[RMDB]
RNA sequence: GGGAACGACUCGAGUAGAGUCGAAAAGGUGGAUGCGCCUUCGCACAGCGCAAGCCAGGCGCGUGCGGCAUGGGAGAGAAACGCGCCCUUGCGCCAGACGAAAGCCAUGUGCCAGUUCACAUCCGCAUGCUCAGCAUACUUUCGAGUAUGCUGAGCAAAAAGAAACAACAACAACAAC
Reactivity to 2A3 in 0.01 (KOAc 150mM, MgCl2 10mM, bicine 150mM(pH8.5), 24C), signal-to-noise 2, nucleotides 027 to 126: g020g000u010g030g110a000u020g050c060g000c070c000u020u000c000g000c000a100c050a040g020c010g000c010a000a010g040c040c150a030g010g000c000g000c010g000u030g050c090g050g000c090a140u150g000g090g020a070g020a030g030a050a140a000c000g000c000g000c000c000c010u000u020g000c000g030c000c000a040g030a050c000g020a000a010a010g000c010c010a120u250g110u000g190c010c000a010g030u110u090c050a030c010a130u000c000c000g020c060a040
Reactivity to DMS in 0.01 (KOAc 150mM, MgCl2 10mM, bicine 150mM(pH8.5), 24C), signal-to-noise 2, nucleotides 027 to 126: g030g040u010g000g010a010u010g010c160g030c080c020u000u000c060g000c050a140c240a300g000c000g010c010a020a020g020c130c100a140g010g000c000g010c000g010u000g010c060g030g000c090a060u010g000g000g010a090g000a150g000a070a060a030c020g000c030g010c000c000c030u000u000g000c010g040c030c010a110g000a300c020g000a010a010a040g020c000c010a020u000g040u000g010c010c000a070g000u020u000c060a090c100a070u010c040c050g040c180a110
Notes
The record gives the reactivity of an RNA of 177 nucleotides to 2A3 and DMS. Source: RMDB library OK2TST, as collected in RNAgym. The RNA was probed in 150 mM KOAc, 10 mM MgCl2 and 150 mM bicine (pH 8.5) at 24 C. 2A3 adducts were read by reverse transcription with SuperScript II with manganese. For DMS the reverse transcriptase was MarathonRT.